Chemical mapping of a 177-nucleotide RNA with DMS. Source: RMDB library TTRDEL, as collected in RNAgym. DMS adducts were read by reverse transcription with MarathonRT. Conditions: 150 mM KOAc, 10 mM MgCl2 and 150 mM bicine (pH 8.5), 24 C. The DMS profile rests on 660 reads.
RNA sequence: GGGAACGACUCGAGUAGAGUCGAAAAGAUAUGGACUCAGGGAGAACAGUGUCGGAAACGACAUGGGUUCAUCGAUCUGAGGUCCUAAGUCAAAAUCAGCGGGGAUGCUUCGGCAUCCCCGCUGAAACACUCGUGUUAAGUUCGCUUAACACGAGUGAAAAGAAACAACAACAACAAC
Reactivity to DMS in 0.01 (KOAc 150mM, MgCl2 10mM, bicine 150mM(pH8.5), 24C), signal-to-noise 1, nucleotides 027 to 126: g000a030u010a300u020g020g000a300c000u000c000a010g000g030g040a040g000a030a000c000a300g000u000g030u000c000g000g040a080a100a280c020g000a000c000a000u000g010g010g000u000u010c000a130u000c250g000a030u000c000u000g000a010g000g000u000c000c010u020a140a140g020u010c020a080a160a150a150u000c010a000g080c000g000g030g000g000a040u020g050c040u000u000c240g050g010c000a010u000c000c000c020c050g000c000u000g000a020a030a120